[RMDB]
RNA sequence: GGGAACGACUCGAGUAGAGUCGAAAAAACAGAACCAAUGGAAGAACGCCCGGGAAGCUGUAGAGGAUCCAAAGUUUUGGGAGAUGGUGGAUGAGGAGCGUGAAGCGCAUCUCCGUGGAGAAUGCAACUGUUCACAGCAUUUCGAUGCUGUGAACAGAAAAGAAACAACAACAACAAC
Reactivity to DMS in 0.01 (KOAc 150mM, MgCl2 10mM, bicine 150mM(pH8.5), 24C), signal-to-noise 2, nucleotides 027 to 126: a090a010c140a000g000a110a100c060c030a080a110u030g000g020a040a090g030a100a110c190g000c060c000c000g000g010g020a130a050g010c030u000g000u010a050g000a110g000g010a070u010c100c040a030a110a100g030u020u010u000u020g000g020g010a110g060a040u020g010g000u000g000g000a030u020g010a060g050g000a080g010c020g010u000g050a090a050g010c030g000c010a000u010c000u000c010c030g030u030g000g000a070g010a050a020u040g000c120a070a080
Reactivity to 2A3 in 0.01 (KOAc 150mM, MgCl2 10mM, bicine 150mM(pH8.5), 24C), signal-to-noise 2, nucleotides 027 to 126: a030a000c090a040g050a040a040c030c000a170a070u090g100g000a120a000g000a100a020c060g030c050c000c040g000g000g000a060a000g030c060u060g010u040a060g010a020g080g080a060u020c000c000a010a070a160g080u010u030u110u100g050g010g020a030g020a000u090g000g010u020g000g000a020u050g020a010g050g010a020g000c030g000u070g020a020a000g030c010g010c080a040u000c000u010c000c020g000u080g090g050a080g000a120a000u150g020c020a070a000